[RMDB]
An RNA of 177 nucleotides, treated with DMS and read out base by base. The RNA was probed in 150 mM KOAc, 10 mM MgCl2 and 150 mM bicine (pH 8.5) at 24 C.

RNA sequence: GGGAACGACUCGAGUAGAGUCGAAAAACAAGGAACGCAGGGAACCCAGAGUCAGGCCUCCAAUAUCUGGACGCAGGUGGAGAGCCAGCCGAUGGAGAAGAUAGUCUGGGGUCGAUUGUACGGCAAGGUAUGCCGGAAUAUUCGUAUUCCGGCAUACAAAAGAAACAACAACAACAAC
Reactivity to DMS in 0.01 (KOAc 150mM, MgCl2 10mM, bicine 150mM(pH8.5), 24C), signal-to-noise 2, nucleotides 027 to 126: a100c080a160a120g000g010a080a050c130g020c060a030g010g000g000a070a130c060c020c010a030g010a080g010u000c080a090g010g000c170c020u010c030c020a060a120u020a100u000c050u010g000g030a180c140g010c050a040g000g000u010g000g020a170g010a200g000c000c010a050g000c080c070g000a070u020g000g000a050g000a100a060g010a050u010a050g000u010c010u020g000g000g000g010u010c040g000a120u000u000g030u010a100c100g010g020c080a090a060g020

Overview:
For DMS the reverse transcriptase was MarathonRT.